[RMDB]
RNA sequence: GGGAACGACUCGAGUAGAGUCGAAAACAGAAUCAGAAGUAGAGAAGUAUGUGACACUAGCCAUGUGGCUCUGGUCAAGCCACUUCAACGUUUUGAGUCUCAGUGGCCUCAUCUGUAAAGUGGGAAUUAAGAGAUGGUGCAUGUAAAGUGCUUAACACGGCCAUAUUACGUUCGCGUAAUAUGGCCGAAAAGAAACAACAACAACAAC
Reactivity to 2A3 in 0.01 (KOAc 150mM, MgCl2 10mM, bicine 150mM(pH8.5), 24C), signal-to-noise 2, nucleotides 027 to 156: c070a060g070a030a070u060c040a050g010a070a000g130u150a020g030a000g010a200a000g060u040a080u100g070u090g020a010c020a050c160u050a060g000c000c030a080u130g040u060g050g000c000u000c010u020g020g000u020c020a000a040g020c000c000a000c060u060u090c110a080a070c030g000u060u020u100u130g020a020g010u000c010u010c110a080g010u110g080g010c030c000u050c040a110u070c020u030g100u230a040a160a090g080u070g060g000g000a010a030u070u060a150a120g020a000g020a060u090g070g000u040g020c010a000u060g020u120a100a030a000g000u000g030c000u090u070a060a010c040a020

Annotation
The data come from the RNA Mapping Database (RMDB), library OK3TST. This 207-nucleotide RNA was probed chemically with 2A3.